[RMDB]
RNA sequence: GGGAACGACUCGAGUAGAGUCGAAAAUACGUGAGCGAUCCACGUACCAUGACUAGGCAUCUAGCGCUGUACUAGGCUAGCAUGAGCACAUGGAGGUACAGCUAGGAUCUAGCUAGUGAUCUGUACACCGUUCGCAGACAUUCGUGUCUGCGAACGGAAAAGAAACAACAACAACAAC
Reactivity to DMS in 0.01 (KOAc 150mM, MgCl2 10mM, bicine 150mM(pH8.5), 24C), signal-to-noise 1, nucleotides 027 to 126: u050a030c070g000u010g000a080g000c090g030a080u000c010c000a030c000g020u000a230c030c040a080u000g000a060c000u000a000g020g000c190a080u020c030u000a060g010c100g010c040u000g020u000a020c030u000a010g060g010c040u000a060g000c060a090u000g000a060g030c070a100c070a190u000g010g040a160g000g000u000a000c000a080g020c040u000a130g010g030a010u000c030u000a030g010c020u000a110g000u020g000a070u010c040u020g000u000a140c180a140
Reactivity to 2A3 in 0.01 (KOAc 150mM, MgCl2 10mM, bicine 150mM(pH8.5), 24C), signal-to-noise 1, nucleotides 027 to 126: u120a000c060g000u030g020a090g120c050g040a020u130c100c010a030c010g000u010a110c000c010a070u070g010a170c000u030a000g000g040c050a130u070c010u030a020g100c080g040c090u040g000u040a030c020u040a070g080g170c010u010a000g060c060a120u250g100a020g060c060a090c020a250u150g070g150a150g000g050u040a000c000a010g010c000u000a070g000g060a060u050c000u000a010g050c000u040a070g090u030g090a050u040c040u030g040u020a060c060a030
The record gives the reactivity of an RNA of 177 nucleotides to DMS and 2A3. 2A3 adducts were read by reverse transcription with SuperScript II with manganese. For DMS, 896 sequencing reads were counted. Reactivities are given for positions 27 through 126. The reactions ran in a buffer of 150 mM KOAc, 10 mM MgCl2 and 150 mM bicine (pH 8.5), at 24 C. The data come from the RNA Mapping Database (RMDB), library OK2TRN. For 2A3, 941 sequencing reads were counted.